[RMDB]
Structure probing data (DMS and 2A3) for a 177-nucleotide construct.
Source: RMDB library OK2TRN, as collected in RNAgym.
For DMS the reverse transcriptase was MarathonRT.
The RNA was probed in 150 mM KOAc, 10 mM MgCl2 and 150 mM bicine (pH 8.5) at 24 C.
For 2A3, 767 sequencing reads were counted.

RNA sequence: GGGAACGACUCGAGUAGAGUCGAAAAUGUAAAUGUACCCCCACACAACUUUGUCCUCAAUGAGGCUUGGCCACAAAACUGGGCUCGACUCAGCCGGGCAUCUCGUCUAGCCUGUUUUGAGAUGCUACAUAGAUCCAGCAUUCGUGCUGGAUCUAUGAAAAGAAACAACAACAACAAC
Reactivity to DMS in 0.01 (KOAc 150mM, MgCl2 10mM, bicine 150mM(pH8.5), 24C), signal-to-noise 2, nucleotides 027 to 126: u020g010u000a020a110a100u010g030u000a260c060c010c050c060c030a080c110a090c050a080a100c100u000u000u000g000u010c030c010u000c110a080a100u020g000a050g000g000c030u000u010g000g000c010c060a120c120a040a030a110a070c150u000g020g010g000c020u000c100g000a050c040u000c060a060g010c100c110g000g020g000c030a050u000c010u000c050g000u020c100u000a070g020c020c030u010g010u000u000u000u000g000a060g000a100u000g010c020u000a140
Reactivity to 2A3 in 0.01 (KOAc 150mM, MgCl2 10mM, bicine 150mM(pH8.5), 24C), signal-to-noise 1, nucleotides 027 to 126: u110g030u070a150a170a090u220g050u190a180c030c010c010c000c010a040c000a000c000a020a080c000u070u070u120g000u060c000c000u010c010a040a080u110g020a060g020g030c000u020u010g000g030c030c020a140c030a070a090a070a040c100u050g020g030g030c010u010c000g120a110c000u000c040a040g100c150c000g030g020g020c010a030u000c040u030c000g000u000c030u020a000g050c040c040u070g040u180u060u020u030g060a070g000a010u110g050c010u000a000